Notes: An RNA of 177 nucleotides, treated with 2A3 and read out base by base. It was measured as part of the RMDB library OK1LIB.

[RMDB]
RNA sequence: GGGAACGACUCGAGUAGAGUCGAAAAUUUUCGAGCUUUUCUUUGCUUCUUAGAAAGAUGGACCCUAUCUUUCUUUUUGAGCUUAGGAGCGCUAACGUUACCUUUCAAUUUAGUAUUAGGGUCAUAGACCAUCGUGCUACUUCGGUAGCACGAUGGUAAAAGAAACAACAACAACAAC
Reactivity to 2A3 in 0.01 (KOAc 150mM, MgCl2 10mM, bicine 150mM(pH8.5), 24C), signal-to-noise 2, nucleotides 027 to 126: u180u180u110u120c090g000a010g010c000u000u000u000u040c000u010u040u020g000c040u130u000c000u000u020a000g020a000a000a000g000a000u040g050g000a010c000c000c000u000a000u000c000u010u020u010c090u010u020u000u100u260g060a020g000c020u000u030a000g020g020a030g000c070g000c100u060a200a050c080g030u080u180a140c020c010u120u220u220c120a210a170u070u100u220a080g070u120a180u100u090a030g030g000g020u030c000a010u120a020g090